An RNA of 207 nucleotides, treated with DMS and 2A3 and read out base by base. In probing experiments dimethyl sulfate is read out at A N1 and C N3, which are open when not base-paired. DMS adducts were read by reverse transcription with MarathonRT. The data come from the RNA Mapping Database (RMDB), library OK3TST. For 2A3, 1,319 sequencing reads were counted. For DMS, 2,716 sequencing reads were counted. Values cover nucleotides 27 to 156.
RNA sequence: GGGAACGACUCGAGUAGAGUCGAAAAUAUCAAAAUGUUUAUGCCUCGCGGCGUACGAAUUGAAAGCAACGGUGAUAAAAACGGCGUAAGAGUUGAGUAUGAGGUGCAACAAGCUGUUGAUGGCGGCUCGUUUGAGACGGUGCUCACCGAUGUAAUCCAAGAGUGGUUAGUUCGCUAACCACUCUUGAAAAGAAACAACAACAACAAC
Reactivity to DMS in 0.01 (KOAc 150mM, MgCl2 10mM, bicine 150mM(pH8.5), 24C), signal-to-noise 2, nucleotides 027 to 156: u000a120u010c050a020a080a070a100u000g010u020u000u000a040u040g010c020c010u000c220g010c170g010g010c020g030u000a170c090g030a120a120u000u000g020a110a150a180g030c040a110a110c000g040g010u000g040a150u000a070a070a150a100a090c010g010g000c010g000u000a090a070g000a110g000u000u010g000a080g030u000a100u000g020a120g020g050u000g000c040a050a050c040a070a150g020c040u000g000u000u000g020a160u000g010g010c020g000g000c070u010c040g030u000u010u010g010a140g040a050c020g000g010u010g030c090u000c020a030c000c010g020a080u000g000u000a060a180u020c020
Reactivity to 2A3 in 0.01 (KOAc 150mM, MgCl2 10mM, bicine 150mM(pH8.5), 24C), signal-to-noise 3, nucleotides 027 to 156: u150a020u070c040a000a020a100a090u120g040u060u160u060a050u050g010c010c000u030c050g080c040g040g000c070g010u040a030c050g060a070a090u050u190g010a090a040a000g000c000a000a030c020g000g010u010g020a030u160a080a090a020a000a000c030g000g000c030g040u090a040a130g080a020g100u070u050g020a030g020u100a080u180g060a050g120g080u170g080c010a010a020c010a070a020g010c020u010g010u010u060g040a090u060g030g010c010g000g000c010u010c020g060u080u100u290g020a030g000a010c020g000g070u120g000c000u030c010a000c050c010g000a010u040g020u030a040a020u040c020